[RMDB]
RNA sequence: GGGAACGACUCGAGUAGAGUCGAAAAGAUCCAUGCUGAUCCAUGGAUGACCAUGCUGAGAGCGUACCGUACGUACGUACAGCUCAUGCGCCAUGGCUGAUGAUCAUGUAUCGCUAGCGACGUACGCCCUGCUGCUUUCCUUCGGGAAAGCAGCAGGAAAAGAAACAACAACAACAAC
Reactivity to 2A3 in 0.01 (KOAc 150mM, MgCl2 10mM, bicine 150mM(pH8.5), 24C), signal-to-noise 1, nucleotides 027 to 126: g020a020u020c010c000a010u020g030c020u140g070a070u000c020c000a000u000g010g000a050u010g040a000c040c010a070u160g010c020u020g000a100g010a020g180c010g010u010a030c040c020g110u100a110c010g010u000a020c000g000u060a030c010a080g020c010u000c030a060u110g000c000g000c030c020a020u040g040g000c060u040g100a140u210g000a080u070c000a070u030g070u080a110u200c040g000c100u030a000g040c020g060a030c010g030u080a020c020g090c000
Reactivity to DMS in 0.01 (KOAc 150mM, MgCl2 10mM, bicine 150mM(pH8.5), 24C), signal-to-noise 1, nucleotides 027 to 126: g030a100u010c010c000a060u000g000c060u020g020a070u010c300c000a000u000g000g000a010u000g000a050c090c070a080u000g040c020u010g000a060g020a020g040c040g000u000a010c030c190g000u010a090c050g020u000a030c070g020u000a080c060a070g030c080u020c140a090u040g000c070g070c200c040a000u010g030g010c040u000g000a100u000g000a070u000c090a050u020g020u000a030u020c040g000c060u010a080g010c010g000a040c010g010u020a010c020g000c110
Chemical mapping of a 177-nucleotide RNA with 2A3 and DMS. For DMS, 807 sequencing reads were counted. 2A3 adducts were read by reverse transcription with SuperScript II with manganese. For 2A3, 1,437 sequencing reads were counted. The data come from the RNA Mapping Database (RMDB), library OK2TRN. The RNA was probed in 150 mM KOAc, 10 mM MgCl2 and 150 mM bicine (pH 8.5) at 24 C.